[RMDB]
Source: RMDB library 15KREP, as collected in RNAgym. An RNA of 177 nucleotides, treated with 2A3 and DMS and read out base by base. 2A3 adducts were read by reverse transcription with SuperScript II with manganese. The 2A3 profile rests on 2,381 reads. The reactions ran in a buffer of 150 mM KOAc, 10 mM MgCl2 and 150 mM bicine (pH 8.5), at 24 C. The DMS profile rests on 2,105 reads.
RNA sequence: GGGAACGACUCGAGUAGAGUCGAAAAUAGACUCCUAUUUUGUCGUUAAGAGGCAUACUAUGGAGAAUUAUGAACUAGAGAAGCACUGUUACGACUUGUUACGUGACUGUGAUGCUGUAGCUCCCCAGGUUUAUUCCUAGUUCGCUAGGAAUAAACCAAAAGAAACAACAACAACAAC
Reactivity to 2A3 in 0.01 (KOAc 150mM, MgCl2 10mM, bicine 150mM(pH8.5), 24C), signal-to-noise 3, nucleotides 027 to 126: u050a000g050a020c000u000c000c000u000a040u030u060u030u000g010u010c030g030u080u020a230a040g100a200g160g000c020a010u010a070c030u060a060u150g010g000a010g030a020a020u140u030a050u110g030a040a000c010u010a010g010a000g000a200a000g040c000a000c010u000g010u020u020a000c030g050a060c070u080u110g120u240u170a050c010g000u000g010a000c000u000g020u010g010a020u030g030c010u100g000u000a000g000c000u010c000c000c000c000a000
Reactivity to DMS in 0.01 (KOAc 150mM, MgCl2 10mM, bicine 150mM(pH8.5), 24C), signal-to-noise 2, nucleotides 027 to 126: u000a030g010a210c000u000c000c000u010a140u000u000u000u000g030u000c000g020u010u020a140a130g000a220g000g010c000a000u000a020c180u010a060u010g010g000a020g020a080a120u000u000a030u000g000a050a040c010u000a030g000a030g000a050a010g000c000a010c020u000g000u000u000a010c000g010a100c150u010u000g000u000u000a080c030g010u010g010a000c010u020g010u000g000a030u000g010c000u000g000u000a010g010c070u000c010c010c010c090a130